[RMDB]
RNA sequence: GGGAACGACUCGAGUAGAGUCGAAAAAUCUUGUCACCGGUGAUGUAUCGUGGCGGGUCCGUCCACCAUCAGUAAGUAUUCGUGGUAUGGAUGCAGUGAUGGAAACGCUGGAGCGUCUUGGCCUGCAACCUUUCUAUCUCUUCGGAGAUAGAAAGGUAAAAGAAACAACAACAACAAC
Reactivity to 2A3 in 0.01 (KOAc 150mM, MgCl2 10mM, bicine 150mM(pH8.5), 24C), signal-to-noise 4, nucleotides 027 to 126: a000u010c020u030u060g040u030c030a050c120c030g030g060u040g030a080u070g050u120a130u160c060g010u040g010g020c020g010g000g020u040c030c000g030u030c010c010a030c010c010a030u050c010a020g170u190a240a020g050u050a110u060u100c090g040u110g120g110u210a070u150g030g020a020u030g060c040a030g040u050g090a020u050g050g000a100a050a010c030g010c030u030g060g040a060g030c020g000u000c000u020u080g030g010c010c000u030g000c010a020
Reactivity to DMS in 0.01 (KOAc 150mM, MgCl2 10mM, bicine 150mM(pH8.5), 24C), signal-to-noise 5, nucleotides 027 to 126: a060u000c040u000u000g010u010c090a090c040c030g000g010u010g010a070u000g010u010a070u000c070g030u010g010g010c020g010g020g020u000c040c040g000u000c020c030a160c100c020a020u000c020a110g010u000a070a130g010u010a050u000u010c110g010u010g010g010u000a080u010g010g000a030u000g010c100a100g010u000g000a030u000g010g000a090a040a040c090g010c050u000g010g000a090g000c050g010u000c040u000u000g010g000c040c030u000g000c140a130